[RMDB]
RNA sequence: GGGAACGACUCGAGUAGAGUCGAAAAGUAGCUGAUGCUGAAUGUGCCCAGCUUCGACCACAGUGAGUUCAGGUUGAGUGUGCCGCCGAUUGCACGGUUGUCGGCAUCGCUACGUCGCAAUUGAUUGCUAACCAAUUCGGUUCGCCGAAUUGGUUAGAAAAGAAACAACAACAACAAC
Reactivity to DMS in 0.01 (KOAc 150mM, MgCl2 10mM, bicine 150mM(pH8.5), 24C), signal-to-noise 4, nucleotides 027 to 126: g030u000a010g010c010u020g030a020u000g010c010u000g010a060a130u010g020u000g000c000c030c020a050g020c030u000u000c080g030a010c020c030a140c190a160g010u020g010a110g010u010u000c110a060g000g000u000u000g010a070g010u010g020u000g010c040c150g020c030c020g010a150u010u010g010c210a200c050g010g020u000u000g030u000c010g010g010c000a010u000c000g010c000u000a010c000g020u000c110g010c070a050a060u010u010g000a150u000u000g000
Reactivity to 2A3 in 0.01 (KOAc 150mM, MgCl2 10mM, bicine 150mM(pH8.5), 24C), signal-to-noise 4, nucleotides 027 to 126: g000u000a000g000c200u220g020a010u010g010c010u000g020a100a130u160g030u080g030c000c020c010a030g070c030u060u080c030g040a000c010c010a050c040a120g190u150g220a140g050u210u120c050a050g020g010u030u020g030a040g030u140g050u050g020c000c000g000c020c010g080a100u070u300g050c150a060c100g030g000u120u120g120u020c000g000g000c010a000u010c010g000c010u000a010c010g050u060c040g010c070a040a120u090u130g110a060u060u170g030

An RNA of 177 nucleotides, treated with DMS and 2A3 and read out base by base. For DMS the reverse transcriptase was MarathonRT. The DMS profile rests on 4,688 reads. Conditions: 150 mM KOAc, 10 mM MgCl2 and 150 mM bicine (pH 8.5), 24 C. For 2A3, 3,479 sequencing reads were counted. It was measured as part of the RMDB library OK2TRN.